Source: RMDB library M2PK50, as collected in RNAgym. An RNA of 177 nucleotides, treated with 2A3 and DMS and read out base by base.
[RMDB]
RNA sequence: GGGAACGACUCGAGUAGAGUCGAAAAGCUGAAAGCUUCGGCUUUCAGCAAAGAAAAAGAUGUACAGCUUCUAAGGUUCAUCAAGAAUAGAAGCGAAAAGAAAAAGCUUAACGUUCGCGUUAAGCAACGCUUAACAUUACUUCGGUAAUGUUAAGCGAAAAGAAACAACAACAACAAC
Reactivity to 2A3 in 0.01 (KOAc 150mM, MgCl2 10mM, bicine 150mM(pH8.5), 24C), signal-to-noise 3, nucleotides 027 to 126: g000c000u010g010a010a010a000g000c000u050u100c210g100g000c000u000u010u010c000a000g010c000a020a020a000g040a010a130a020a010a000g150a040u200g040u210a080c040a080g010c000u000u000c000u020a060a180g240g040u060u030c040a150u100c110a140a040g040a020a010u050a030g000a000a010g020c010g030a020a090a010a020g130a010a080a010a010a010g010c010u000u010a010a000c010g040u040u050c280g010c000g080u000u010a000a000g000c010a010a000
Reactivity to DMS in 0.01 (KOAc 150mM, MgCl2 10mM, bicine 150mM(pH8.5), 24C), signal-to-noise 3, nucleotides 027 to 126: g010c000u000g000a000a010a000g030c000u000u010c190g030g000c000u000u010u000c000a020g000c000a020a080a090g000a040a030a100a130a100g000a110u020g020u000a070c160a200g000c000u000u010c010u000a030a080g020g010u000u000c060a120u020c210a140a110g000a020a130u000a000g010a000a000g000c000g020a050a040a080a110g040a080a110a100a100a110g010c000u000u000a000a000c010g010u000u040c210g000c010g010u000u000a010a010g010c010a030a070

About this RNA:
For 2A3 the reverse transcriptase was SuperScript II with manganese.